[RMDB]
RNA sequence: GGGAACGACUCGAGUAGAGUCGAAAAGAUAUGGAAUCCGGUCAGGCAACAGCACUGGGUCGGAAACGACCUUGGUGACAUGCCUACGGAUUCCUAAGUCAAAACUUCGGCGCUUCGGCGCCGAAGACAACAUAUAGGAGUUCGCUCCUAUAUGUUGAAAAGAAACAACAACAACAAC
Reactivity to DMS in 0.01 (KOAc 150mM, MgCl2 10mM, bicine 150mM(pH8.5), 24C), signal-to-noise 3, nucleotides 027 to 126: g000a030u000a060u010g000g000a040a000u000c000c000g020g020u010c260a010g030g030c000a130a080c210a120g000c010a000c000u000g000g000g010u000c000g000g010a020a000a030c010g020a020c000c000u000u010g060g010u000g000a020c050a300u000g010c010c000u000a030c010g010g000a030u000u000c010c000u010a000a050g000u000c000a130a150a150a200c010u010u000c000g010g040c000g030c000u000u030c280g040g020c000g020c000c010g010a000a020g000a160
Reactivity to 2A3 in 0.01 (KOAc 150mM, MgCl2 10mM, bicine 150mM(pH8.5), 24C), signal-to-noise 4, nucleotides 027 to 126: g020a010u010a010u050g000g000a000a010u010c000c020g120g110u300c180a030g000g000c070a300a090c070a300g020c000a010c010u010g010g000g000u000c010g010g000a010a000a000c000g010a000c060c000u210u300g040g000u010g080a050c060a260u300g000c000c000u000a020c000g000g000a000u000u020c000c010u000a000a000g000u000c020a000a020a230a290c030u010u000c000g020g060c080g070c050u110u180c300g180g000c060g040c010c010g020a000a030g000a020